[RMDB]
RNA sequence: GGGAACGACUCGAGUAGAGUCGAAAAGAUAUGGAGCCGACACAACAGCUAUGAGGUCGGAAACGACCUAUAGACAUGUCAAGGCUCCUAAGUCAAAGGAAGAACCUAGUUCGCUAGGUUCUUCCAACAAGGAGGAAACCUUCGGGUUUCCUCCUUGAAAAGAAACAACAACAACAAC
Reactivity to DMS in 0.01 (KOAc 150mM, MgCl2 10mM, bicine 150mM(pH8.5), 24C), signal-to-noise 1, nucleotides 027 to 126: g000a050u000a300u010g000g020a000g050c000c020g000a110c270a060c120a080a030c140a070g010c000u000a010u000g030a000g010g000u000c020g000g000a060a030a110c000g000a010c000c000u000a010u000a020g030a100c080a070u000g000u000c020a090a230g030g000c010u000c010c000u000a020a100g000u000c030a080a160a100g030g000a010a000g020a010a010c000c000u000a030g000u010u020c260g010c000u000a000g010g010u000u000c000u020u000c000c030a070a080